[RMDB]
This 177-nucleotide RNA was probed chemically with DMS and 2A3. Source: RMDB library OK2TST, as collected in RNAgym. Conditions: 150 mM KOAc, 10 mM MgCl2 and 150 mM bicine (pH 8.5), 24 C. As a SHAPE reagent, 2A3 marks flexible, mostly unpaired nucleotides at the ribose 2'-OH. Reactivities are given for positions 27 through 126.
RNA sequence: GGGAACGACUCGAGUAGAGUCGAAAAGGCUGCCGCGGCCGAACGUUCCUGAGCCCCGUCGAACAGCGGGUUCUUGGUGUCCGGCCAGGAGUCGGAGUUUCCCUUGGCGAACCGGGAGACGGUUUCCCAGUGAUUCUUAUUUCGAUAAGAAUCACUGAAAAGAAACAACAACAACAAC
Reactivity to DMS in 0.01 (KOAc 150mM, MgCl2 10mM, bicine 150mM(pH8.5), 24C), signal-to-noise 9, nucleotides 027 to 126: g010g000c010u000g020c010c010g010c150g010g010c000c000g000a020a020c020g000u010u010c050c010u000g010a020g010c300c010c010c040g020u000c070g000a080a150c300a160g000c050g000g000g000u000u000c010u000u000g000g010u010g000u000c010c000g010g000c000c000a220g000g000a040g010u000c000g000g010a140g010u000u000u000c000c000c000u000u000g000g010c060g000a040a040c040c130g000g000g010a110g010a100c010g010g000u000u000u000c020c020
Reactivity to 2A3 in 0.01 (KOAc 150mM, MgCl2 10mM, bicine 150mM(pH8.5), 24C), signal-to-noise 6, nucleotides 027 to 126: g040g000c040u280g220c100c010g130c230g040g000c000c000g000a010a000c010g080u260u220c010c000u010g010a010g000c010c010c030c010g060u110c080g140a200a110c030a060g020c080g020g000g000u010u020c020u030u110g020g000u040g010u020c010c000g000g000c000c000a010g010g000a010g000u010c010g020g010a100g010u020u040u020c010c000c000u010u070g060g000c070g020a070a040c020c020g010g030g020a150g040a040c010g030g000u010u020u010c000c010